[RMDB]
RNA sequence: GGGAACGACUCGAGUAGAGUCGAAAACACACAAGGUUCGCCUUGUGUGCAAGAAUAGACGAAUACUACCGUAGUAGUAUUCAGGUCACAUAACUACGGAAAUGGCGUUCUGCUUCGGCAGAACGAACGUGAGGUUCUAUUUCGAUAGAACCUCACGAAAAGAAACAACAACAACAAC
Reactivity to 2A3 in 0.01 (KOAc 150mM, MgCl2 10mM, bicine 150mM(pH8.5), 24C), signal-to-noise 4, nucleotides 027 to 126: c010a000c010a010c000a000a000g020g000u030u070c150g160c020c000u000u000g000u010g000u000g000c010a020a030g110a100a100u160a120g080a060c040g020a020a000u000a010c020u040a080c000c020g030u070a040g000u010a000g000u010a030u000u030c010a010g050g070u070c030a040c010a190u190a170a060c020u020a020c020g050g040a020a060a100u140g200g010c010g010u000u010c010u000g010c000u040u060c120g100g000c000a000g000a010a000c000g000a000a010
Reactivity to DMS in 0.01 (KOAc 150mM, MgCl2 10mM, bicine 150mM(pH8.5), 24C), signal-to-noise 2, nucleotides 027 to 126: c000a010c010a000c000a010a010g000g020u000u010c230g000c000c010u000u000g010u020g030u000g000c050a100a070g000a100a090u000a080g010a140c110g010a010a020u000a000c000u000a090c000c100g020u020a020g000u010a040g000u000a000u010u010c010a070g000g000u000c080a110c140a070u000a080a070c010u000a030c030g000g000a140a080a110u010g010g000c010g000u000u000c000u000g010c000u000u010c210g030g000c000a000g000a000a000c010g010a030a040